This 177-nucleotide RNA was probed chemically with 2A3 and DMS. Reactivities are given for positions 27 through 126. 2A3 is a SHAPE reagent: it acylates the 2'-hydroxyl of flexible nucleotides of all four kinds. For 2A3 the reverse transcriptase was SuperScript II with manganese. It was measured as part of the RMDB library OK2TRN. For 2A3, 2,783 sequencing reads were counted. The DMS profile rests on 4,353 reads.

RNA sequence: GGGAACGACUCGAGUAGAGUCGAAAAUGAAUGAAAGAGAAAAUUGCCUACUUAGGUAUGGGCAUUUGGGGAUUUUGCCUUGCUUCCUUAUUAGCGAAUAAGGGUUAUCGUGUAGUAGGAUGGGCGCCCGUGAAAGUAUUUUCGAAUACUUUCACGGAAAAGAAACAACAACAACAAC
Reactivity to 2A3 in 0.01 (KOAc 150mM, MgCl2 10mM, bicine 150mM(pH8.5), 24C), signal-to-noise 3, nucleotides 027 to 126: u070g070a010a040u070g040a050a100a050g120a010g050a010a050a070a120u180u140g000c000c000u040a060c050u090u070a060g060g050u100a060u140g030g020g000c030a010u050u060u100g040g000g010g030a010u120u060u040u160g020c010c000u010u040g030c020u100u130c010c020u040u050a020u050u060a100g090c070g070a030a000u060a070a020g060g030g030u110u070a060u060c050g000u050g010u170a040g030u000a010g040g040a020u040g040g050g030c050g030c040
Reactivity to DMS in 0.01 (KOAc 150mM, MgCl2 10mM, bicine 150mM(pH8.5), 24C), signal-to-noise 4, nucleotides 027 to 126: u010g010a130a070u010g000a050a070a090g000a140g000a060a060a080a050u010u010g000c000c000u000a040c060u000u000a070g020g010u000a040u010g010g010g000c020a020u000u000u010g000g010g000g010a150u000u010u010u010g010c010c020u000u010g010c120u000u000c010c000u000u000a030u000u000a110g010c130g010a070a040u010a050a030g000g010g010u010u010a060u000c080g000u010g020u010a040g020u000a030g010g000a080u000g010g020g020c110g020c290